An RNA of 177 nucleotides, treated with 2A3 and DMS and read out base by base.
The DMS profile rests on 22,416 reads.
The RNA was probed in 150 mM KOAc, 10 mM MgCl2 and 150 mM bicine (pH 8.5) at 24 C.
Source: RMDB library M2PK50, as collected in RNAgym.
RNA sequence: GGGAACGACUCGAGUAGAGUCGAAAAACCUGAUGAUUCGUCAUCAGGUCACAUGCCCCCCGAACGGCUUCCUGACCGGGCGGAUUCACUUUAAAUGGAGCACUGCUGCAUCAUUCGUGAUGCAGAAUAAAACGUUAUCAUUCGUGAUAACGUUUUAAAAAGAAACAACAACAACAAC
Reactivity to 2A3 in 0.01 (KOAc 150mM, MgCl2 10mM, bicine 150mM(pH8.5), 24C), signal-to-noise 7, nucleotides 027 to 126: a000c000c000u000g000a000u000g000a000u000u110c180g050u000c080a000u000c000a010g000g010u000c010a100c000a050u160g040c000c000c000c020c000c000g010a020a000c030g040g000c000u120u050c020c020u030g030a050c000c000g010g020g000c030g000g040a070u170u170c060a050c110u110u160u160a050a100a100u170g030g000a020g010c030a020c140u140g000c010u010g000c020a000u000c000a010u010u130c140g060u030g000a000u000g000c000a010g000a000a000
Reactivity to DMS in 0.01 (KOAc 150mM, MgCl2 10mM, bicine 150mM(pH8.5), 24C), signal-to-noise 9, nucleotides 027 to 126: a050c000c000u000g010a010u000g000a030u000u010c190g020u000c000a010u000c000a010g000g000u000c050a040c140a080u000g000c010c000c000c120c010c010g000a030a080c070g000g000c020u000u010c060c060u000g010a180c040c020g000g000g020c050g000g000a100u000u010c130a070c130u000u000u000a050a080a120u010g010g000a050g010c110a100c180u000g000c010u000g000c000a000u000c000a030u000u010c150g020u000g010a010u000g000c000a010g000a070a090